[RMDB]
RNA sequence: GGGAACGACUCGAGUAGAGUCGAAAACAGGGCGCGUCUGGUUGACCUCGACAUUCUGCUGCUGGAUGAGGCCACCGUGGCCCUGGAUCCUGCCACCGAGGCCGUGGUGCAGCGGGCCACCCUCACCCUGGAAAAGUACCUUCGGGUACUUUUCCAGAAAAGAAACAACAACAACAAC
Reactivity to DMS in 0.01 (KOAc 150mM, MgCl2 10mM, bicine 150mM(pH8.5), 24C), signal-to-noise 1, nucleotides 027 to 126: c010a000g010g000g020c040g030c060g000u070c150u000g040g000u020u050g040a040c040c000u020c020g020a100c080a090u010u020c000u040g000c040u010g000c040u000g000g000a090u000g010a090g000g020c050c010a060c100c040g050u010g000g000c010c000c020u000g000g010a090u030c000c020u020g000c050c010a020c060c020g030a230g000g000c050c090g020u020g010g030u020g030c070a060g000c000g000g000g000c040c010a100c010c020c040u000c120a090c070c110
Reactivity to 2A3 in 0.01 (KOAc 150mM, MgCl2 10mM, bicine 150mM(pH8.5), 24C), signal-to-noise 5, nucleotides 027 to 126: c030a010g020g000g000c150g040c060g180u100c110u140g060g000u060u110g110a300c000c000u010c020g080a090c030a110u110u030c030u090g110c020u030g000c030u060g040g040a130u160g020a040g010g040c030c050a000c010c020g060u090g080g030c000c000c020u000g000g000a000u030c010c000u010g050c030c010a060c010c060g030a040g020g010c070c080g030u020g020g010u030g010c010a010g020c000g010g020g000c010c000a010c000c000c000u050c020a090c050c020
The record gives the reactivity of an RNA of 177 nucleotides to DMS and 2A3. The reactions ran in a buffer of 150 mM KOAc, 10 mM MgCl2 and 150 mM bicine (pH 8.5), at 24 C. The 2A3 profile rests on 3,070 reads.